[RMDB]
RNA sequence: GGGAACGACUCGAGUAGAGUCGAAAAAGUUUAGCUAGGUCUGCAUGUGUUUAUUAUUCUCAAGUCUUGUGUAAAUCAAUUCUUUUGGUUGACUCAAGUUUGGUUACUUCUGUUGGUGAUUCUAGUGUAGGAGAACCGUUCGCGGUUCUCAAAAGAAACAACAACAACAAC
Reactivity to DMS in 0.01 (KOAc 150mM, MgCl2 10mM, bicine 150mM(pH8.5), 24C), signal-to-noise 3, nucleotides 027 to 129: a000g050u040u000u050a080g040c020u030a070g000g020u020c050u040g070c050a050u010g040u020g030u040u000u030a110u090u020a180u060u040c050u040c050a020a030g010u020c040u050u010g040u030g030u050a050a060a000u030c070a050a070u020u070c150u000u000u000u000g000g040u100u020g040a100c090u030c030a000a140g000u010u030u000g000g020u000u040a060c140u040u020c080u030g030u000u000g020g070u000g010a030u030u030c000u030a090g030u010g070u010a070g000
Reactivity to 2A3 in 0.01 (KOAc 150mM, MgCl2 10mM, bicine 150mM(pH8.5), 24C), signal-to-noise 3, nucleotides 027 to 129: a000g010u030u030u080a020g000c000u000a010g000g090u040c000u000g010c010a040u060g100u040g050u210u100u000a160u080u080a180u150u080c140u010c010a000a030g030u000c000u040u010g010u000g020u030a030a010a000u010c000a000a070u170u160c020u060u200u060u040g010g000u050u000g060a070c000u000c010a000a000g000u000u000u000g080g020u040u120a070c040u090u060c040u040g010u040u020g020g000u060g010a050u080u020c000u040a020g020u010g110u130a040g060